Structure probing data (DMS and 2A3) for a 177-nucleotide construct. For DMS the reverse transcriptase was MarathonRT. Conditions: 150 mM KOAc, 10 mM MgCl2 and 150 mM bicine (pH 8.5), 24 C. The 2A3 profile rests on 760 reads.
[RMDB]
RNA sequence: GGGAACGACUCGAGUAGAGUCGAAAACAAGUUGGAAUGGUGUUUAAAUAUUCCCAACAGGACAAGGGAGAACUUACCCUUACAGAAUAUGAUGGUAAAUGUAUCUGCAUCAUAAUUCUGACCCUAGCUAAUACCCUGUCUUCGGACAGGGUAUUAGAAAAGAAACAACAACAACAAC
Reactivity to DMS in 0.01 (KOAc 150mM, MgCl2 10mM, bicine 150mM(pH8.5), 24C), signal-to-noise 3, nucleotides 027 to 126: c100a100a090g000u010u000g010g000a120a090u000g030g010u000g030u000u010u010a040a090a090u010a180u000u020c020c020c000a050a080c120a090g020g010a180c160a040a020g000g000g000a120g010a090a040c180u010u020a100c010c000c010u000u000a300c000a010g000a010a000u000a010u000g010a000u000g000g000u020a030a070a100u010g020u000a090u020c210u000g000c020a010u000c000a000u000a060a060u010u000c000u000g010a220c070c000c010u000a090g010
Reactivity to 2A3 in 0.01 (KOAc 150mM, MgCl2 10mM, bicine 150mM(pH8.5), 24C), signal-to-noise 2, nucleotides 027 to 126: c020a070a040g060u080u080g130g030a020a140u030g090g070u050g120u090u220u130a140a230a050u110a040u030u030c030c010c010a070a070c010a030g020g040a030c040a040a040g000g040g000a040g050a110a070c040u060u100a080c010c040c000u050u010a040c030a010g010a010a040u000a000u000g000a000u010g020g180u200a110a120a140u200g070u120a110u160c070u100g070c020a000u020c000a000u040a090a270u100u000c000u050g040a050c000c000c000u010a080g050